[RMDB]
RNA sequence: GGGAACGACUCGAGUAGAGUCGAAAAAAACAGGGAUUGAAAGACAAUGUGCUUAGUCAUUCUAUUUAAAUUUCAGCACUCCAGUCAUUAAGGCAUUCUUUUUAAAUCAAUGCCAAUCAUUUGCAUGAUCUAAAAAUAUUUAACCAACUUUAGGGGCGAUAUAACGCCCAUUCGUGGGCGUUAUAUCAAAAGAAACAACAACAACAAC
Reactivity to 2A3 in 0.01 (KOAc 150mM, MgCl2 10mM, bicine 150mM(pH8.5), 24C), signal-to-noise 2, nucleotides 027 to 156: a000a000a000c040a010g040g010g000a100u050u100g090a050a080a090g020a010c020a020a030u060g010u000g010c000u030u100a030g000u060c010a070u120u020c030u170a160u100u100u200a090a140a100u030u130u090c020a010g000c000a010c000u040c050c000a010g010u060c050a050u100u110a020a040g000g000c010a030u050u130c050u130u190u020u080u150a030a050a030u040c040a030a060u020g020c020c000a010a050u090c050a090u010u110u190g020c020a010u050g000a010u030c020u070a010a000a000a070a090u150a100u100u110u080a060a030c000c000a040a070c020u050u100u100a030g000g000g050g000c030
Reactivity to DMS in 0.01 (KOAc 150mM, MgCl2 10mM, bicine 150mM(pH8.5), 24C), signal-to-noise 2, nucleotides 027 to 156: a060a050a050c030a080g010g000g030a070u020u000g010a100a050a070g000a060c040a070a100u000g010u010g020c080u000u000a090g030u000c060a070u000u010c050u000a100u010u000u000a060a060a130u010u000u010c040a070g000c000a050c010u000c040c080a160g030u000c050a100u000u000a100a070g040g030c040a040u000u000c040u000u020u010u020u000a060a060a030u010c010a060a020u000g010c020c070a080a100u000c090a140u000u010u000g030c010a120u000g000a040u010c030u010a010a060a030a050a130u000a060u010u000u010a070a080c010c020a040a060c140u000u000u000a070g060g000g030g040c100